About this RNA
This 177-nucleotide RNA was probed chemically with DMS and 2A3. DMS (dimethyl sulfate) methylates the pairing face of unpaired adenines and cytosines. For 2A3 the reverse transcriptase was SuperScript II with manganese. The data come from the RNA Mapping Database (RMDB), library OK2TST. For 2A3, 673 sequencing reads were counted. The DMS profile rests on 1,714 reads.

RNA sequence: GGGAACGACUCGAGUAGAGUCGAAAAACGGCGUUUCCAACCUAUUUUUGUAACAGAGCCUUCUUUAGAAGAUGCUGUGUUUAUUCUUCGUGGUCUUCGUGAGAAGUAUGAAAUUUUCCAUGGCGUAAACGCACAAGAUUUUCGAAUCUUGUGCGUUAAAAGAAACAACAACAACAAC
Reactivity to DMS in 0.01 (KOAc 150mM, MgCl2 10mM, bicine 150mM(pH8.5), 24C), signal-to-noise 2, nucleotides 027 to 126: a050c150g010g010c030g020u000u000u000c020c030a140a150c100c100u010a090u000u000u000u000u000g010u000a030a060c040a040g010a080g000c050c010u000u000c010u000u020u000a130g000a030a000g000a080u010g020c010u010g000u010g000u000u010u000a100u010u020c030u010u000c050g040u000g000g020u000c030u000u010c030g000u010g010a110g000a020a030g000u010a120u020g000a060a090a140u010u000u000u000c030c000a060u000g020g010c140g020u000a060
Reactivity to 2A3 in 0.01 (KOAc 150mM, MgCl2 10mM, bicine 150mM(pH8.5), 24C), signal-to-noise 1, nucleotides 027 to 126: a010c050g010g020c100g000u120u020u000c050c050a090a040c000c010u050a300u090u190u110u100u060g050u060a030a030c040a040g060a010g160c020c000u030u000c020u110u270u090a080g010a000a000g000a010u110g000c000u050g010u010g070u150u030u090a080u100u010c060u030u060c020g110u020g020g000u020c000u040u030c030g010u060g070a090g010a000a030g010u060a010u060g040a050a120a080u090u140u020u070c010c010a050u070g000g000c020g040u040a000